An RNA of 177 nucleotides, treated with DMS and 2A3 and read out base by base. The data come from the RNA Mapping Database (RMDB), libraries RFM100 and RFMREP. For 2A3, 1,801 sequencing reads were counted. The reactions ran in a buffer of 150 mM KOAc, 10 mM MgCl2 and 150 mM bicine (pH 8.5), at 24 C.

RNA sequence: GGGAACGACUCGAGUAGAGUCGAAAAGACAGAAGAUUAAUGAACAACCUAUUAUGAAAGCCCUAUCCCUAGUGAUUAGCCUAGUCGUGAUUAGCGUGGUGGUGAUUAUUAUCCCACCGUGCGGGGCCUUGAUCUUUGGGUUCGCCCAAAGAUCAAGAAAAGAAACAACAACAACAAC
Reactivity to DMS in 0.01 (KOAc 150mM, MgCl2 10mM, bicine 150mM(pH8.5), 24C), signal-to-noise 3, nucleotides 027 to 126: g010a170c120a090g030a170a060g000a120u010u010a040a040u000g000a110a080c150a020a100c130c050u020a040u030u020a120u030g010a090a090a130g000c030c000c000u010a120u000c000c000c010u000a080g000u010g000a100u050u010a080g000c120c070u000a050g010u000c070g010u000g020a100u030u010a060g020c000g030u000g000g000u010g000g000u030g020a010u020u040a120u000u040a170u000c000c000c000a000c000c000g000u010g040c030g020g020g010g010c080
Reactivity to 2A3 in 0.01 (KOAc 150mM, MgCl2 10mM, bicine 150mM(pH8.5), 24C), signal-to-noise 4, nucleotides 027 to 126: g040a030c060a000g150a090a010g050a110u150u170a070a100u250g110a130a090c010a010a020c020c040u120a110u240u150a200u270g140a120a020a020g010c000c000c000u070a070u030c000c000c000u000a010g000u010g130a260u050u150a090g010c010c010u020a030g040u060c050g050u090g060a060u060u080a020g010c010g000u000g000g020u030g000g030u110g150a010u010u210a090u080u240a040u080c000c020c000a000c010c000g000u000g000c000g000g000g000g000c000